[RMDB]
RNA sequence: GGGAACGACUCGAGUAGAGUCGAAAAGCGCUGUGGCCCCAUGGCUCACUUUGCUGUGUGAAGUGGCUCAGUCUCCGGGAGAGUCCUUAGCCAGGCAGGCCUGACGGCAACUGCCAGGUCAUGGUGAUCUGGAAUCGCUGACCAAAGGGAGUCAGUCGCUUACAUCGGCAUUCGUGCCGAUGUAAGCAAAAGAAACAACAACAACAAC
Reactivity to 2A3 in 0.01 (KOAc 150mM, MgCl2 10mM, bicine 150mM(pH8.5), 24C), signal-to-noise 1, nucleotides 027 to 156: g110c090g070c050u130g040u050g200g000c000c000c000c000a030u090g020g000c060u050c010a050c020u070u120u060g000c010u080g050u030g010u030g240a000a170g020u020g000g070c030u000c000a000g020u050c010u000c030c000g080g120g030a190g020a010g100u100c010c060u050u100a010g010c000c050a040g000g000c000a000g000g160c020c030u120g070a100c120g030g010c030a080a110c120u050g050c040c000a030g000g050u010c030a050u130g100g000u110g060a140u000c030u060g020g010a010a010u040c060g000c010u000g000a030c040c000a010a070a050g040g030g000a020g000u040c010a020g060u070c000